Chemical mapping of a 177-nucleotide RNA with 2A3. The RNA was probed in 150 mM KOAc, 10 mM MgCl2 and 150 mM bicine (pH 8.5) at 24 C. Source: RMDB library OK1LIB, as collected in RNAgym.

RNA sequence: GGGAACGACUCGAGUAGAGUCGAAAAAAUGACGAUACUCACUAGCAAGCUUAAGAGCCGGUUCAAACUCCCUAGAAAUAUGAAUCAAUCGUCUAUAUUACUACAUUCCGAGUAUCAUACGACUCACGGCAGUAUCGCAGUUCGCUGCGAUACUGCCAAAAGAAACAACAACAACAAC
Reactivity to 2A3 in 0.01 (KOAc 150mM, MgCl2 10mM, bicine 150mM(pH8.5), 24C), signal-to-noise 1, nucleotides 027 to 126: a000a000u090g000a000c000g000a000u000a100c000u070c000a000c060u060a030g050c010a060a000g010c010u060u130a000a100g050a000g160c080c080g010g000u170u040c220a040a210a190c010u000c000c000c000u000a090g190a130a030a000u100a000u150g100a170a000u010c000a070a030u000c000g050u000c010u000a000u000a000u070u210a090c090u000a000c040a300u060u130c050c110g000a000g120u000a060u100c060a030u030a040c100g000a000c010u000c000a000c000